[RMDB]
RNA sequence: GGGAACGACUCGAGUAGAGUCGAAAAGUGCAGAGUGAAAUUCAUAGGUGCAUCGCCAAUUUGGCGGAACGACCCGGUACUCCGCGUAGUCGCGACGUAAACGUUCAGUGUUGGCGUUCAGGCCUCAGCCCAUCAUGGUAUUCGUACCAUGAUGGGCAAAAGAAACAACAACAACAAC
Reactivity to DMS in 0.01 (KOAc 150mM, MgCl2 10mM, bicine 150mM(pH8.5), 24C), signal-to-noise 2, nucleotides 027 to 126: g110u020g010c020a040g050a210g020u000g000a020a110a120u040u000c050a040u000a090g010g000u000g030c080a020u000c000g010c000c000a080a060u000u000u000g000g000c010g010g020a000a040c020g010a120c010c010c000g000g060u020a040c110u000c140c080g060c010g090u070a040g000u000c090g030c070g040a030c070g000u010a020a080a160c030g010u020u070c030a150g020u010g000u010u000g000g000c060g020u000u000c170a090g000g000c020c030u030c100a300